[RMDB]
RNA sequence: GGGAACGACUCGAGUAGAGUCGAAAAGCGAAAGUUGCCAUAAGACCGUAACUUUCGUAGUCAUUGAUAAAGGGGCAGGUCUCGCUCUUUUGUCAUUGCGGUUGCCUAGAGGCAUGGUCGUUUACCGAAAAGAGCUCAUUCUUCGGAAUGAGCUCAACUAACUAUUGCCGUUCGCGGCAAUAGUUAGAAAAGAAACAACAACAACAAC
Reactivity to 2A3 in 0.01 (KOAc 150mM, MgCl2 10mM, bicine 150mM(pH8.5), 24C), signal-to-noise 2, nucleotides 027 to 156: g010c000g020a010a000a000g000u020u010g000c010c010a140u170a160a060g060a080c060c020g020u010a000a000c000u000u010u000c000g000u000a030g020u030c020a020u020u010g000a010u020a010a000a000g000g000g000g000c030a030g030g280u110c110u090c120g000c000u010c000u020u000u000u010g010u000c000a000u000u060g020c030g040g030u060u050g010c010c020u090a100g030a130g100g020c030a060u080g020g000u010c020g000u000u020u020a300c020c000g000a070a060a040a060g000a020g000c000u000c000a000u000u000c010u040u100c240g030g020a000a000u000g010a000g000c010u000c020a000a000
Reactivity to DMS in 0.01 (KOAc 150mM, MgCl2 10mM, bicine 150mM(pH8.5), 24C), signal-to-noise 2, nucleotides 027 to 156: g000c010g000a020a030a040g020u000u000g010c000c050a290u010a170a170g010a070c120c090g000u000a040a030c010u000u010u010c010g030u000a060g010u000c070a090u010u010g010a030u000a010a010a060g030g000g010g050c040a160g030g000u010c200u000c110g020c010u000c000u000u000u000u010g000u000c010a090u000u000g010c050g020g040u020u000g000c020c060u000a120g010a180g040g000c050a060u010g010g000u010c010g000u000u010u000a140c000c010g000a100a090a140a150g000a030g020c000u000c010a020u000u010c000u000u010c300g010g000a030a020u010g010a000g010c020u000c000a000a050